[RMDB]
RNA sequence: GGGAACGACUCGAGUAGAGUCGAAAACGUGGUUCCUUCGGGAACCACGGUGUGGAGCAAUAAGUUUCUUACGAAGCGUGUCAGGACCUGACGGUAGCAGCACUAAGUAUGGAGCUUAUGUGCUCUUUUUUGAUGAAAUCACAUUCGUGUGAUUUCAAUCAGUUACUGGAUUCGUCCAGUAACUGAUAAAAGAAACAACAACAACAAC
Reactivity to 2A3 in 0.01 (KOAc 150mM, MgCl2 10mM, bicine 150mM(pH8.5), 24C), signal-to-noise 1, nucleotides 027 to 156: c000g000u000g000g000u000u000c020c000u030u020c260g000g000g010a000a000c000c000a010c000g000g000u050g050u060g030g000a000g020c010a020a000u030a020a000g030u030u070u000c010u040u010a010c010g080a110a040g110c030g100u010g090u090c020a030g010g060a010c010c010u170g160a120c180g040g010u010a000g020c020a000g000c000a000c030u000a100a000g000u000a060u080g010g010a000g010c010u000u000a000u010g070u040g000c000u010c000u030u050u010u000u070u070g050a030u020g000a010a000a000u010c010a000c000a020u060u110c260g080u060g000u020g010a000u000u020u000c000a000
Reactivity to DMS in 0.01 (KOAc 150mM, MgCl2 10mM, bicine 150mM(pH8.5), 24C), signal-to-noise 3, nucleotides 027 to 156: c000g030u010g010g010u000u000c000c000u010u000c300g120g050g020a010a000c000c000a000c000g000g000u000g030u010g010g010a080g040c040a090a020u000a030a040g010u000u000u000c000u000u000a070c030g030a270a110g040c110g040u000g000u010c100a280g040g010a060c060c010u010g000a140c200g010g020u000a040g010c070a220g050c010a030c010u010a080a300g000u020a030u000g010g010a070g000c000u010u000a010u000g010u010g010c010u000c010u000u000u000u000u000u000g010a250u000g000a010a020a010u010c000a000c000a140u000u000c260g020u000g040u000g000a020u000u010u000c000a110